[RMDB]
RNA sequence: GGGAACGACUCGAGUAGAGUCGAAAAGAGACUAAAAUGUCAGAUGGUGUCUGCCUUGUUACUUACAUGUAGUUUGACGGAAUUUUCUAUCGUGUUAGUAACAUUCCGUCUGGUGGAUUCCAUCAAAGGGAAUAGUAUACUUCGGUAUACUAUUCCCAAAAGAAACAACAACAACAAC
Reactivity to DMS in 0.01 (KOAc 150mM, MgCl2 10mM, bicine 150mM(pH8.5), 24C), signal-to-noise 3, nucleotides 027 to 126: g000a170g010a070c010u020a070a040a120a100u060g020u000c010a150g020a010u000g010g020u000g000u000c000u010g010c020c000u010u040g000u030u010a000c010u010u040a130c180a080u070g020u010a010g020u010u050u030g010a010c030g000g010a030a020u000u010u010u000c010u000a020u050c300g040u020g010u010u010a000g000u000a020a030c130a020u010u000c030c020g010u010c020u020g020g010u010g000g000a020u000u000c010c000a000u000c010a030a070a080
Reactivity to 2A3 in 0.01 (KOAc 150mM, MgCl2 10mM, bicine 150mM(pH8.5), 24C), signal-to-noise 9, nucleotides 027 to 126: g100a000g000a010c020u110a100a090a110a150u300g020u070c050a020g010a000u000g000g020u010g010u020c000u000g020c000c010u070u100g080u070u020a030c020u080u120a050c030a120u210g040u070a050g040u090u110u190g080a050c040g040g040a080a050u070u030u060u060c020u030a090u190c100g120u090g080u180u030a010g000u030a010a020c010a030u070u050c050c000g040u040c080u030g000g000u000g000g000a000u020u000c000c000a000u000c000a050a020a000